[RMDB]
RNA sequence: GGGAACGACUCGAGUAGAGUCGAAAAACACUCGAACGUGAUCACACUCUCACGAGAGAACGAUCGUGAGAGUGUGUACUCGAUCGAGUACGUUCGAGAUCGAGUUCGAGAGAGAGAGUGUGAGAACACACGAGAUCUCUCGAUCACGAGUGAACGAGGAAACGGUUCAUUUCGAUGAACCGUUUCCAAAAGAAACAACAACAACAAC
Reactivity to 2A3 in 0.01 (KOAc 150mM, MgCl2 10mM, bicine 150mM(pH8.5), 24C), signal-to-noise 2, nucleotides 027 to 156: a020c080a010c000u020c040g030a050a020c020g030u070g050a130u130c010a000c000a000c010u030c000u010c000a000c000g010a000g010a000g090a250a120c210g080a120u000c010g000u000g000a000g000a000g020u000g000u000g000u010a000c010u000c000g090a110u070c060g000a010g050u010a010c010g040u000u020c020g030a030g010a070u020c040g010a000g000u000u000c000g000a000g000a000g010a010g000a000g000a090g020u020g010u030g010a260g140a210a050c040a000c000a000c010g040a080g020a200u000c000u000c000u000c000g000a000u000c000a040c020g040a040g000u070g020a020a010c060g020a080
An RNA of 207 nucleotides, treated with 2A3 and read out base by base. Source: RMDB library OK3TST, as collected in RNAgym. For 2A3, 1,128 sequencing reads were counted. The reactions ran in a buffer of 150 mM KOAc, 10 mM MgCl2 and 150 mM bicine (pH 8.5), at 24 C.